Background
Chemical mapping of a 207-nucleotide RNA with DMS and 2A3. Conditions: 150 mM KOAc, 10 mM MgCl2 and 150 mM bicine (pH 8.5), 24 C.

RNA sequence: GGGAACGACUCGAGUAGAGUCGAAAACUCCACGCUGGGUAAUGGACGACGGCGGCGUGUGGCGAAAAGGGAUACCGGUAGUCAGUGUCUGGAACAUCCCAAGGGGCGGCGGAGCUAGCACCCCGACAAAACGGGCACAAGUUCGCUUGUGCCCGAAUCGAAAUUAUAACUUCGGUUAUAAUUUCGAAAAAGAAACAACAACAACAAC
Reactivity to DMS in 0.01 (KOAc 150mM, MgCl2 10mM, bicine 150mM(pH8.5), 24C), signal-to-noise 1, nucleotides 027 to 156: c050u000c020c010a070c040g010c020u000g000g000g020u000a080a070u010g020g000a090c030g020a020c060g030g050c070g060g000c020g010u000g030u010g030g000c020g010a060a100a130a100g020g010g000a100u010a090c050c000g030g040u000a100g010u000c080a080g010u000g000u000c010u000g030g020a100a100c050a110u000c000c050c010a160a120g010g010g020g050c030g000g010c000g020g010a120g010c060u000a070g000c030a080c000c000c000c000g000a080c130a060a000a070a160c020g020g000g030c030a040c000a010a040g020u000u010c280g010c030u010u000g010u000g000c000c000c000g050a000a030
Reactivity to 2A3 in 0.01 (KOAc 150mM, MgCl2 10mM, bicine 150mM(pH8.5), 24C), signal-to-noise 3, nucleotides 027 to 156: c040u030c010c000a030c030g020c020u050g000g000g080u130a110a100u100g060g020a030c040g010a020c030g040g030c010g000g000c030g000u070g020u050g040g020c090g050a070a020a050a090g050g000g000a020u050a070c030c020g030g020u060a040g070u040c050a010g040u000g030u120c020u050g010g010a050a050c010a080u030c020c020c020a070a090g010g000g010g000c070g040g000c060g020g050a090g050c030u020a010g020c010a070c000c010c000c000g010a010c040a010a100a020a020c020g010g000g000c000a000c000a000a010g010u050u130c210g010c140u000u000g000u000g000c000c000c010g000a000a010